[RMDB]
RNA sequence: GGGAACGACUCGAGUAGAGUCGAAAAUUGUAGUGACGUAAGUUUCGUCCUAAGAGGACUAAUUAGGUAGCCUAAUAGACUACGACUUACGUGGUGGGUCGUGAACAAGCCCGGAGUACAUUCCCUACCAGUUAGCUAUGUUCGCAUAGCUAACUGGAAAAGAAACAACAACAACAAC
Reactivity to DMS in 0.01 (KOAc 150mM, MgCl2 10mM, bicine 150mM(pH8.5), 24C), signal-to-noise 1, nucleotides 027 to 126: u040u000g010u000a040g000u010g000a070c020g000u000a040a000g000u000u000u000c200g000u010c010c000u020a100a140g010a200g010g000a020c000u010a070a080u000u010a070g030g010u000a010g000c010c010u000a110a090u010a060g000a020c010u000a000c010g000a040c000u000u000a010c000g030u000g020g030u000g000g020g000u010c040g050u010g010a050a120c130a100a140g000c010c000c000g010g010a060g030u000a030c040a040u000u000c000c000c020u010a220
Reactivity to 2A3 in 0.01 (KOAc 150mM, MgCl2 10mM, bicine 150mM(pH8.5), 24C), signal-to-noise 2, nucleotides 027 to 126: u100u030g040u060a170g080u040g190a000c020g000u000a000a020g000u000u030u140c010g000u000c000c010u110a160a100g100a150g110g010a020c000u010a080a110u220u090a040g130g010u010a020g010c000c010u060a160a110u070a120g030a020c020u030a000c040g020a010c020u000u030a030c030g000u030g000g030u110g030g030g010u070c070g050u090g130a080a050c030a030a060g020c010c030c030g020g040a030g020u040a010c010a030u010u030c010c010c000u000a030